[RMDB]
RNA sequence: GGGAACGACUCGAGUAGAGUCGAAAAGUCUCGCACAAAGGAGUUUGUCACUGACGGUAGCAUGCGAGUUCUCAUCGGAACGAAAUUAGUGACUGAAGGAAUUGACAUUAAGCAAUUGAUGAUGGUAUCACCGUGACUCAUUCGUGAGUCACGGUGAAAAAGAAACAACAACAACAAC
Reactivity to DMS in 0.01 (KOAc 150mM, MgCl2 10mM, bicine 150mM(pH8.5), 24C), signal-to-noise 2, nucleotides 027 to 126: g000u010c000u000c000g010c030a020c130a030a150a170g020g010a160g010u010u010u000g000u010c040a030c030u010g000a040c040g000g040u010a130g010c100a110u000g020c010g010a040g010u000u000c010u000c030a090u030c180g010g010a120a090c100g000a060a090a110u010u000a030g030u000g010a010c010u010g000a110a100g000g010a050a080u020u010g010a060c080a110u010u010a020a100g020c140a030a060u000u020g020a030u010g020a100u030g000g010u000a170
Reactivity to 2A3 in 0.01 (KOAc 150mM, MgCl2 10mM, bicine 150mM(pH8.5), 24C), signal-to-noise 1, nucleotides 027 to 126: g030u000c000u030c010g070c010a070c010a060a070a070g200g010a120g040u080u120u110g050u080c040a010c080u080g020a000c050g000g080u070a000g000c110a040u060g000c020g000a000g000u060u000c010u000c000a130u070c100g080g000a000a130c010g040a070a020a030u110u060a000g010u010g060a040c040u110g000a050a030g000g100a020a090u060u070g050a020c060a050u080u120a100a000g000c010a010a050u000u040g010a030u030g010a010u020g030g030u110a030